Conditions: 150 mM KOAc, 10 mM MgCl2 and 150 mM bicine (pH 8.5), 24 C. Structure probing data (2A3 and DMS) for a 207-nucleotide construct. DMS adducts were read by reverse transcription with MarathonRT. Values cover nucleotides 27 to 156.

[RMDB]
RNA sequence: GGGAACGACUCGAGUAGAGUCGAAAAAUUACUGGCUUUAUUCCUUUACAAGGUAGAGGAACGAGACGUCGCUCCGAGGAUGUUGUUCCGAAUCCAAAGAUCAAGCGGCGCAGGUUAAAUCGGAAAUAGUCGUUGCAGACUCCGAUGUAGCGGUGAACCGAUUUAUCUAGUUCGCUAGAUAAAUCGGAAAAGAAACAACAACAACAAC
Reactivity to 2A3 in 0.01 (KOAc 150mM, MgCl2 10mM, bicine 150mM(pH8.5), 24C), signal-to-noise 1, nucleotides 027 to 156: a010u100u070a030c030u020g050g050c040u100u110u120a030u110u020c000c000u030u060u000a060c110a210a120g140g020u020a000g020a030g000g010a010a010c040g030a010g070a080c030g000u000c000g010c010u000c000c020g000a000g020g000a000u010g000u170u110g000u170u030c020c000g000a020a000u000c010c010a070a000a040g010a020u100c110a180a000g000c000g040g000c040g000c090a030g010g020u040u090a060a120a000u000c000g040g010a010a050a050u100a050g020u030c060g050u070u100g000c000a020g030a140c040u060c070c040g020a040u010g030u020a000g020c020g010g040u030g020a080a030
Reactivity to DMS in 0.01 (KOAc 150mM, MgCl2 10mM, bicine 150mM(pH8.5), 24C), signal-to-noise 1, nucleotides 027 to 156: a090u000u000a040c030u000g000g010c060u000u000u020a090u010u020c000c000u000u000u110a060c050a190a160g020g020u020a030g000a090g010g010a030a030c010g020a110g020a110c020g020u000c010g010c020u010c000c000g020a300g030g020a020u000g000u000u000g050u000u000c020c010g020a100a080u010c000c010a080a110a070g000a070u000c150a120a070g040c000g050g020c020g040c030a060g010g010u010u010a020a090a130u010c000g010g000a060a060a170u000a140g000u000c010g050u010u000g030c060a100g000a100c070u000c020c020g020a060u000g010u000a040g060c020g000g010u000g000a090a210